[RMDB]
Record summary
Chemical mapping of a 207-nucleotide RNA with 2A3. Values cover nucleotides 27 to 156. It was measured as part of the RMDB library OK3TST.

RNA sequence: GGGAACGACUCGAGUAGAGUCGAAAAACUUAACCAUCCUCUUAAUGUAGGGUGUAGAAGCUGUGCUCAUUUUUUUCACUGGUUUAAAUCAUGCUGCGAUAGGCUUCCUUGCACACACAGCAUCAAAGGAACUUACAGCUUUUAGGGAAUUGACCUAGCAUCCGAUUUAGUUCGCUAAAUCGGAUGCAAAAGAAACAACAACAACAAC
Reactivity to 2A3 in 0.01 (KOAc 150mM, MgCl2 10mM, bicine 150mM(pH8.5), 24C), signal-to-noise 1, nucleotides 027 to 156: a000c030u100u090a010a000c010c000a000u030c000c000u030c000u080u190a300a220u300g090u170a040g000g040g000u020g020u040a040g050a020a010g020c050u020g010u080g050c080u070c170a170u150u050u070u020u000u100u150c000a060c080u020g110g000u000u120u110a000a160a070u060c060a060u050g000c010u000g000c060g150a060u060a040g030g040c040u180u030c000c060u040u040g050c020a040c000a000c000a000c000a100g020c000a070u050c130a110a080a000g050g000a000a010c010u050u050a050c070a000g110c000u060u020u060u180a060g000g030g080a180a160u030u120g050a070c000c050u020a020